[RMDB]
RNA sequence: GGGAACGACUCGAGUAGAGUCGAAAAACAUUAGAUCAAGUUAGUAUUGGUACGAUGGAUUUGGCUAAAGUCGACAAUAAGCAACAUGUUUACUUAGUUGGAAUGAACGACGGCACCAUGCCACAACAUGAUGGACAAGCUUCGGCUUGUCCAUCAUAAAAGAAACAACAACAACAAC
Reactivity to 2A3 in 0.01 (KOAc 150mM, MgCl2 10mM, bicine 150mM(pH8.5), 24C), signal-to-noise 1, nucleotides 027 to 126: a000c010a020u040u050a020g000a050u000c000a000a000g090u010u120a000g080u060a140u040u070g030g000u000a000c100g000a030u000g050g000a000u070u010u010g000g000c030u100a300a000a000g000u000c000g000a020c000a010a040u040a180a000g000c070a000a060c080a010u230g070u050u050u010a020c020u110u000a050g020u010u000g100g040a060a080u140g010a150a000c000g010a000c000g030g110c000a010c000c050a110u230g040c000c000a100c000a000a000c000
Reactivity to DMS in 0.01 (KOAc 150mM, MgCl2 10mM, bicine 150mM(pH8.5), 24C), signal-to-noise 1, nucleotides 027 to 126: a000c050a040u000u000a060g000a110u060c080a020a030g040u000u110a180g020u080a250u020u000g000g000u000a080c040g000a000u000g000g000a010u000u000u000g000g040c010u000a000a140a150g000u000c010g000a000c000a000a050u050a150a050g110c000a040a070c150a160u000g000u000u000u000a240c000u000u080a150g060u100u000g000g020a040a160u010g030a020a120c200g000a000c000g000g030c160a020c000c000a090u000g000c000c080a080c230a000a000c120
An RNA of 177 nucleotides, treated with 2A3 and DMS and read out base by base. The RNA was probed in 150 mM KOAc, 10 mM MgCl2 and 150 mM bicine (pH 8.5) at 24 C. The data come from the RNA Mapping Database (RMDB), library OK1LIB.